[RMDB]
This 207-nucleotide RNA was probed chemically with 2A3 and DMS. It was measured as part of the RMDB library ARCHII. For DMS, 1,400 sequencing reads were counted. DMS adducts were read by reverse transcription with MarathonRT. High DMS reactivity at an A or C suggests that its Watson-Crick edge is free.
RNA sequence: GGGAACGACUCGAGUAGAGUCGAAAACCGUCUUCGUUCGCGAAGACGGGUAAUAAAGAGUAUAGUUUAAUGGUAAAACAGAAAGCUUCAACCUUUAAAUUCUUAGUUCGAGUCUAAGUACUCUUGCCAAUGAGUAGAGUUCGUUCGCGAACUCUAAACUUCAUUACGAGUUCGCUCGUAAUGAAGUAAAAGAAACAACAACAACAAC
Reactivity to 2A3 in 0.01 (KOAc 150mM, MgCl2 10mM, bicine 150mM(pH8.5), 24C), signal-to-noise 2, nucleotides 027 to 156: c000c000g000u000c010u010u010c020g060u010u080c200g020c000g120a000a000g000a000c010g000g020g000u030a080a080u110a020a060a000g000a020g000u000a000u010a030g010u000u000u000a030a040u100g180g080u080a020a000a010a000c010a030g010a020a010a000g040c090u300u220c160a080a100c010c010u040u040u000a020a030a020u000u020c000u000u000a010g000u010u020c010g000a000g020u000c010u010a000a000g000u010a020c000u000c000u000u000g020c020c000a070a160u200g070a080g130u070a010g010a000g000u010u010c030g000u050u080c180g020c000g120a000a010c000u030c000u040a030a030
Reactivity to DMS in 0.01 (KOAc 150mM, MgCl2 10mM, bicine 150mM(pH8.5), 24C), signal-to-noise 1, nucleotides 027 to 156: c020c000g040u010c000u000u020c000g020u000u000c210g060c020g000a010a010g000a000c000g000g020g030u000a050a090u000a080a000a030g000a030g000u000a060u000a060g000u010u000u000a030a030u000g010g020u000a040a050a070a080c010a300g000a050a050a020g000c130u000u000c240a160a100c220c000u000u000u000a020a000a050u010u000c130u010u000a040g020u000u000c020g010a300g000u010c000u000a000a050g000u010a000c020u000c010u000u000g030c110c080a050a070u030g000a110g000u000a030g000a080g060u000u000c000g020u000u000c300g010c020g050a000a030c000u000c000u000a000a050
For 2A3, 1,074 sequencing reads were counted. Values cover nucleotides 27 to 156.